[RMDB]
Source: RMDB library M2PK90, as collected in RNAgym. This 177-nucleotide RNA was probed chemically with DMS and 2A3. The 2A3 profile rests on 1,269 reads.
RNA sequence: GGGAACGACUCGAGUAGAGUCGAAAAAGAAAAGCGGAGGAGGGUUAUGGAUUGCGCUAAGUCCGCCCGCGCGUGGUGUGGGCUGGAAUUCGUGAAUGGAGGAUAAUUAAUGCCGCGCGCGCAAAAAGAAUUAUCCAUACUUCGGUAUGGAUAAUUCAAAAGAAACAACAACAACAAC
Reactivity to DMS in 0.01 (KOAc 150mM, MgCl2 10mM, bicine 150mM(pH8.5), 24C), signal-to-noise 2, nucleotides 027 to 126: a150g010a100a070a070a140g010c100g010g010a080g000g000a140g010g000g000u000u010a120u000g010g010a060u000u000g020c110g030c130u000a070a110g000u000c020c020g000c000c050c000g020c000g020c040g030u030g000g040u000g030u000g000g000g000c050u010g010g000a080a090u000u000c070g000u020g000a100a090u000g000g010a070g000g010a180u000a060a100u010u010a050a080u010g000c000c040g030c010g010c030g020c030g020c170a050a040a060a080a050
Reactivity to 2A3 in 0.01 (KOAc 150mM, MgCl2 10mM, bicine 150mM(pH8.5), 24C), signal-to-noise 1, nucleotides 027 to 126: a000g030a020a060a010a000g030c100g000g050a030g040g080a060g000g030g000u110u070a070u150g070g000a060u040u170g050c040g020c120u060a040a000g070u010c020c000g000c000c000c000g020c010g000c010g030u020g060g010u030g020u080g050g020g020c040u020g030g080a050a070u100u070c060g010u070g180a110a080u110g030g000a030g020g000a000u030a110a030u140u080a130a040u130g010c000c000g070c000g000c020g000c010g000c000a070a070a000a010a000